[RMDB]
RNA sequence: GGGAACGACUCGAGUAGAGUCGAAAAGGGGUCUUCCCGAAAUGGCUCGUGAGUGAGCUUGGAUUUAACAAGCUGAAGCCUCCACGGCUUGUUUGUCAGCUCACCCGAGCCUAAGGGAAGACGGAGGCACCCAAAUCGAGCGGUUCGCCGCUCGAAACAGUCUGCCUUAGUUCGCUAAGGCAGACUGAAAAGAAACAACAACAACAAC
Reactivity to 2A3 in 0.01 (KOAc 150mM, MgCl2 10mM, bicine 150mM(pH8.5), 24C), signal-to-noise 2, nucleotides 027 to 156: g100g010g040g030u000c000u000u010c000c000c010g030a120a160a080u210g000g000c010u020c000g090u210g140a240g000u030g010a010g040c080u080u150g130g000a030u230u290u140a000a000c000a000a010g010c000u030g050a120a000g030c000c030u000c030c020a050c000g010g000c020u000u000g020u000u000u010g000u010c080a000g030c000u000c000a000c000c000c000g000a000g000c010c000u000a010a000g000g000g000a010a000g000a010c000g000g010a000g010g000c020a110c010c010c010a020a090a050u030c000g010a000g000c000g000g040u110u160c300g070c080c000g010c000u000c000g000a010a000a000
Chemical mapping of a 207-nucleotide RNA with 2A3. Reactivities are given for positions 27 through 156. For 2A3, 1,725 sequencing reads were counted. The data come from the RNA Mapping Database (RMDB), library RNAMAK. Conditions: 150 mM KOAc, 10 mM MgCl2 and 150 mM bicine (pH 8.5), 24 C.